Source information
Structure probing data (2A3 and DMS) for a 177-nucleotide construct. The RNA was probed in 150 mM KOAc, 10 mM MgCl2 and 150 mM bicine (pH 8.5) at 24 C. 2A3 adducts were read by reverse transcription with SuperScript II with manganese. It was measured as part of the RMDB library OK2TST.
RNA sequence: GGGAACGACUCGAGUAGAGUCGAAAAACAUGGCUACCAAACAUGGCGGGAUCCCUAGUAACCUAUUCACUAAGUACUCGUACCUCACGUCAUCAACAUCCACAUUUGUGGAGCAUGCUAAGGGAUCGAAUACGCAAACCUUCGGGUUUGCGUAUUCAAAAGAAACAACAACAACAAC
Reactivity to 2A3 in 0.01 (KOAc 150mM, MgCl2 10mM, bicine 150mM(pH8.5), 24C), signal-to-noise 1, nucleotides 027 to 126: a000c020a050u070g050g000c000u070a080c040c010a110a000a050c070a080u050g030g000c030g070g000g000a020u060c000c000c000u020a030g020u010a040a060c030c030u040a110u060u130c020a020c180u040a050a050g070u050a050c020u040c130g030u010a070c020c030u000c000a090c050g090u030c010a100u020c030a030a090c000a100u080c030c010a040c030a170u200u220u210g020u000g010g000a000g000c020a030u100g000c010u090a060a110g000g020g010a030u010c000
Reactivity to DMS in 0.01 (KOAc 150mM, MgCl2 10mM, bicine 150mM(pH8.5), 24C), signal-to-noise 2, nucleotides 027 to 126: a040c080a010u010g030g000c050u020a060c050c060a060a130a110c130a080u000g000g000c010g000g060g000a060u000c000c040c000u000a060g000u000a030a130c040c040u000a080u000u000c080a070c110u000a030a070g000u000a070c050u000c140g060u000a120c060c020u000c050a140c130g000u000c020a040u000c060a060a070c180a170u000c010c000a000c000a300u000u000u000g000u010g000g000a020g000c150a030u000g000c040u010a040a090g000g060g000a040u020c040